[RMDB]
RNA sequence: GGGAACGACUCGAGUAGAGUCGAAAAGAUAUGGAUCGUUUGUACCCUCACUUCUAUGAAGUGAAUCGGAAACGAUUCAUGGAGAAGCCCACAACGAUCCUAAGUCAAACUGCACUUCGGUGCAGAAGAUGAAACAACAGUUCGCUGUUGUUUCAUCAAAAGAAACAACAACAACAAC
Reactivity to DMS in 0.01 (KOAc 150mM, MgCl2 10mM, bicine 150mM(pH8.5), 24C), signal-to-noise 4, nucleotides 027 to 126: g010a080u000a140u010g000g000a020u000c000g020u000u000u020g030u020a280c080c080c060u000c170a280c020u000u000c020u000a240u020g020a200a160g000u000g000a000a020u000c020g000g010a070a090a100c000g020a010u000u000c000a010u000g000g000a040g010a030a050g010c180c170c170a070c110a030a030c010g010a020u000c000c010u000a030a120g000u000c060a100a110a260c000u020g000c000a000c000u000u010c210g010g000u020g020c000a010g010a040a120
Reactivity to 2A3 in 0.01 (KOAc 150mM, MgCl2 10mM, bicine 150mM(pH8.5), 24C), signal-to-noise 5, nucleotides 027 to 126: g030a010u100a050u160g010g000a020u000c020g050u050u120u300g240u260a260c040c070c030u150c080a150c030u020u010c020u090a300u180g030a020a000g000u010g000a000a010u010c000g000g020a030a010a010c000g000a010u000u010c000a000u000g000g030a020g000a020a000g040c050c080c030a070c100a020a000c000g010a010u000c000c010u030a070a020g020u010c050a080a110a140c050u010g000c000a000c000u050u100c300g170g000u000g000c000a000g000a000a020

Background
Structure probing data (DMS and 2A3) for a 177-nucleotide construct. For DMS, 4,470 sequencing reads were counted. The reactions ran in a buffer of 150 mM KOAc, 10 mM MgCl2 and 150 mM bicine (pH 8.5), at 24 C. It was measured as part of the RMDB library TTRDES.